[RMDB]
RNA sequence: GGGAACGACUCGAGUAGAGUCGAAAAGCACACCACGUGGGUUGUUGGUCCACGGGAAGUGCGGCCAAUAUCCAUCACAAAGCAACUUGUUAUCUUGUUUUGGUUGUAUGCUGCUACAAUAACGAGACAGUAAAUGACGAUUCGUCGUCAUUUACUGAAAAGAAACAACAACAACAAC
Reactivity to 2A3 in 0.01 (KOAc 150mM, MgCl2 10mM, bicine 150mM(pH8.5), 24C), signal-to-noise 6, nucleotides 027 to 126: g010c010a010c000a020c030c020a140c070g020u000g000g020g020u050u080g030u020u040g070g010u000c000c000a000c000g000g040g040a180a020g010u010g010c020g020g000c000c000a010a010u110a040u020c030c010a040u080c040a010c030a050a060a020g040c010a020a080c050u140u110g050u130u100a110u080c030u020u030g050u050u060u030u070g100g020u050u060g060u060a100u140g060c050u040g040c010u070a060c030a060a080u080a090a030c050g030a010g030a060
Reactivity to DMS in 0.01 (KOAc 150mM, MgCl2 10mM, bicine 150mM(pH8.5), 24C), signal-to-noise 9, nucleotides 027 to 126: g010c040a050c050a220c060c030a110c130g030u000g010g010g010u000u010g040u010u000g010g000u000c010c000a010c000g000g010g000a120a100g020u010g000c080g010g010c030c030a050a060u000a050u000c020c020a070u010c110a090c080a050a060a060g010c050a050a070c100u000u000g000u000u000a090u010c090u000u000g010u000u000u000u010g000g010u010u000g010u000a050u010g010c060u010g010c060u000a060c100a050a050u010a050a060c070g000a090g010a210